An RNA of 177 nucleotides, treated with 2A3 and read out base by base. The reactions ran in a buffer of 150 mM KOAc, 10 mM MgCl2 and 150 mM bicine (pH 8.5), at 24 C. 2A3 is a SHAPE reagent: it acylates the 2'-hydroxyl of flexible nucleotides of all four kinds. Source: RMDB library OK1LIB, as collected in RNAgym.
RNA sequence: GGGAACGACUCGAGUAGAGUCGAAAACGAUACCGGGCAGCGUCUGUACGCGCUGGCAUGUCGAGUGCCGAUGGGCCCGGCCGAUCGGUACGCCGUGCUGGCGACGCCGUCGGCGGCCGAUCGAUUGUGAGCACCUUCCUUUCGAGGAAGGUGCUCAAAAAGAAACAACAACAACAAC
Reactivity to 2A3 in 0.01 (KOAc 150mM, MgCl2 10mM, bicine 150mM(pH8.5), 24C), signal-to-noise 1, nucleotides 027 to 126: c030g080a040u150a170c040c000g010g010g000c000a200g000c000g010u000c020u300g270u070a000c020g020c020g080c040u000g100g180c070a070u040g120u280c000g100a040g060u000g000c000c100g030a030u090g000g000g000c000c020c020g000g000c000c000g000a000u000c000g020g000u190a250c000g000c000c000g020u280g210c060u290g000g000c000g200a200c060g000c030c000g000u050c040g000g050c010g010g000c000c000g000a000u000c000g000a040u000u140g060